An RNA of 177 nucleotides, treated with 2A3 and DMS and read out base by base.
For DMS, 1,340 sequencing reads were counted.

[RMDB]
RNA sequence: GGGAACGACUCGAGUAGAGUCGAAAAGAUAUGGAUGAUGACCACGAUCCACCCGUUGAAAUCGGAAACGAUGGAGGGUGUGAUUAUCAAUCAUCCUAAGUCAAAGCUUUAAGUUCGCUUAAAGCAAGAUUCGUUCAAGGUUCGCCUUGAACGAAUCAAAAGAAACAACAACAACAAC
Reactivity to 2A3 in 0.01 (KOAc 150mM, MgCl2 10mM, bicine 150mM(pH8.5), 24C), signal-to-noise 2, nucleotides 027 to 126: g050a030u110a090u190g010g000a080u030g000a000u030g050a020c020c020a130c300g030a000u000c000c000a000c000c000c000g140u210u040g000a010a010a010u010c030g030g050a100a050a000c050g000a020u000g000g060a040g000g000g000u060g010u050g020a030u010u030a040u050c030a040a100u020c000a020u010c000c010u030a120a020g020u040c040a020a170a030g000c000u000u040u030a000a040g020u020u120c300g040c070u010u020a000a000a010g000c000a000a030
Reactivity to DMS in 0.01 (KOAc 150mM, MgCl2 10mM, bicine 150mM(pH8.5), 24C), signal-to-noise 2, nucleotides 027 to 126: g000a020u000a300u010g000g000a000u000g020a010u000g020a070c290c250a080c180g000a000u000c000c020a010c010c000c000g020u010u020g000a070a080a010u000c000g000g000a170a070a090c010g020a020u000g000g010a050g020g010g000u000g000u000g020a000u000u000a090u010c080a100a000u000c000a000u000c000c000u010a040a160g010u020c070a040a110a130g000c000u000u000u000a000a010g020u010u000c220g010c000u000u000a040a000a000g020c000a070a130
For 2A3 the reverse transcriptase was SuperScript II with manganese. Source: RMDB library TTRDEL, as collected in RNAgym.